[RMDB]
RNA sequence: GGGAACGACUCGAGUAGAGUCGAAAAGAAAGAAAGAGGCAACAGUGAUGAGUCCUUACAGACCUGUAAUGAUUCUUGCGGGAAUGAUCGCUUGAUUCAAAGAACAUCUAAGGGACUGAGUUAUCAAAAUCAGGUGUCUCUUCGGAGACACCUGAUUAAAAGAAACAACAACAACAAC
Reactivity to 2A3 in 0.01 (KOAc 150mM, MgCl2 10mM, bicine 150mM(pH8.5), 24C), signal-to-noise 2, nucleotides 027 to 126: g000a010a040a000g050a060a100a000g080a010g070g000c030a020a010c040a140g050u060g180a100u140g010a000g000u000c000c000u000u060a100c060a070g000a020c020c020u070g050u070a040a070u030g030a020u000u010c000u000u000g000c000g070g000g210a300a300u250g090a300u120c000g000c000u010u050g000a020u010u010c020a060a040a000g070a090a000c020a020u050c010u040a000a020g050g040g000a010c000u000g060a020g060u030u040a120u120c050a040a080
Reactivity to DMS in 0.01 (KOAc 150mM, MgCl2 10mM, bicine 150mM(pH8.5), 24C), signal-to-noise 1, nucleotides 027 to 126: g010a150a050a130g000a110a000a090g000a190g040g000c030a060a020c140a020g020u020g020a150u000g000a070g010u020c020c000u020u000a190c220a010g000a030c120c050u000g000u010a200a120u000g000a050u000u000c000u000u000g000c000g050g000g000a190a110u050g010a100u000c020g000c000u000u010g110a020u000u000c020a010a050a050g000a020a120c100a190u000c050u000a070a090g000g000g000a070c000u020g010a200g000u000u000a050u000c050a070a110
An RNA of 177 nucleotides, treated with 2A3 and DMS and read out base by base. In probing experiments dimethyl sulfate is read out at A N1 and C N3, which are open when not base-paired. Conditions: 150 mM KOAc, 10 mM MgCl2 and 150 mM bicine (pH 8.5), 24 C. The 2A3 profile rests on 524 reads. It was measured as part of the RMDB library RFM100. For 2A3 the reverse transcriptase was SuperScript II with manganese.